[RMDB]
RNA sequence: GGGAACGACUCGAGUAGAGUCGAAAACACAAUUCUCUAAGCGAUGAGAAGCGUGUGGAAAAUUAGGGAAGGGCUACGGCUAUAAUCCUAAGAAAGCUUAUGUACAAGCGGAGGUAUUCUCAGAACGAAAACCAUUUGGCGUUCGCGCCAAAUGGAACAUUCCUGUAACGUUCGCGUUACAGGAAUGAAAAGAAACAACAACAACAAC
Reactivity to 2A3 in 0.01 (KOAc 150mM, MgCl2 10mM, bicine 150mM(pH8.5), 24C), signal-to-noise 4, nucleotides 027 to 156: c040a000c010a030a060u020u010c010u010c020u090a200a130g150c090g110a110u080g020a050g000a040a010g010c070g030u020g010u030g010g030a090a120a040a080u070u040a040g010g020g040a050a050g080g040g000c020u040a000c080g030g000c020u010a010u030a220a060u050c000c000u020a050a010g060a050a080a010g010c010u100u040a050u260g110u090a080c050a070a040g000c040g010g040a050g060g020u050a110u150u010c030u000c020a050g030a120a020c080g070a060a080a040a060c000c000a010u000u010u000g000g000c000g020u030u040c220g000c000g000c060c020a000a000a000u000g000g000a000a000
Reactivity to DMS in 0.01 (KOAc 150mM, MgCl2 10mM, bicine 150mM(pH8.5), 24C), signal-to-noise 2, nucleotides 027 to 156: c030a050c020a080a230u000u010c000u030c010u010a080a170g040c160g030a230u010g010a020g010a050a040g010c300g050u000g020u010g000g010a090a040a120a130u010u010a040g010g010g020a090a090g030g010g000c030u000a090c170g070g000c010u000a070u000a060a080u020c010c010u010a030a060g010a100a070a190g000c050u000u000a040u000g020u000a130c100a040a110g040c050g070g000a010g000g000u000a070u000u010c010u010c020a140g000a120a120c060g000a110a050a060a190c010c010a020u000u010u000g000g050c000g030u000u010c300g030c010g040c000c000a000a010a000u010g000g000a010a030
The record gives the reactivity of an RNA of 207 nucleotides to 2A3 and DMS. The reactions ran in a buffer of 150 mM KOAc, 10 mM MgCl2 and 150 mM bicine (pH 8.5), at 24 C. For 2A3, 2,405 sequencing reads were counted.